This 207-nucleotide RNA was probed chemically with DMS and 2A3.
The reactions ran in a buffer of 150 mM KOAc, 10 mM MgCl2 and 150 mM bicine (pH 8.5), at 24 C.
The DMS profile rests on 6,713 reads.
It was measured as part of the RMDB library OK3TST.
[RMDB]
RNA sequence: GGGAACGACUCGAGUAGAGUCGAAAAGGGAAAUUGUCCUGAUAACCGGUUGCUACCAACAUCUAGUGAUCUCAAGUAACCAUGCAGAGAUUCCUCUGGAAUAACACCAGAGAGACUGUUAUUUCGAAGAUGCAAGAUCGAAAGAGUUUUAUUGGAACAGUGAUAAAUCAUUCGUGAUUUAUCACUGAAAAGAAACAACAACAACAAC
Reactivity to DMS in 0.01 (KOAc 150mM, MgCl2 10mM, bicine 150mM(pH8.5), 24C), signal-to-noise 3, nucleotides 027 to 156: g010g010g020a010a100a120u010u010g010u000c010c020u000g020a130u010a120a130c040c020g020g010u000u000g010c040u000a170c060c020a060a080c080a060u000c020u000a070g040u000g010a030u000c010u000c030a080a160g020u010a060a070c050c070a100u000g010c030a140g010a110g000a110u000u000c020c000u010c010u000g000g020a110a100u000a100a120c110a080c020c010a080g020a120g000a070g020a070c040u020g000u000u000a090u000u000u000c060g000a080a090g000a100u000g010c050a070a110g010a050u000c020g000a060a070a090g000a090g020u010u000u000u010a120u020u000g000g020a100a260
Reactivity to 2A3 in 0.01 (KOAc 150mM, MgCl2 10mM, bicine 150mM(pH8.5), 24C), signal-to-noise 5, nucleotides 027 to 156: g050g010g020a090a100a090u200u120g080u050c010c010u030g050a100u050a140a070c040c010g060g000u050u040g010c020u070a100c030c000a070a060c020a070u040c020u050a040g060u030g130a070u010c030u010c070a070a080g040u050a100a070c040c010a040u100g010c020a030g050a020g010a180u110u100c010c000u000c000u000g000g030a130a060u140a210a050c040a040c050c000a000g000a000g030a010g000a020c020u010g030u060u050a070u010u070u060c050g050a100a030g030a040u060g050c040a040a030g010a100u030c020g040a060a100a010g040a000g000u030u050u120u130a100u110u110g030g040a080a030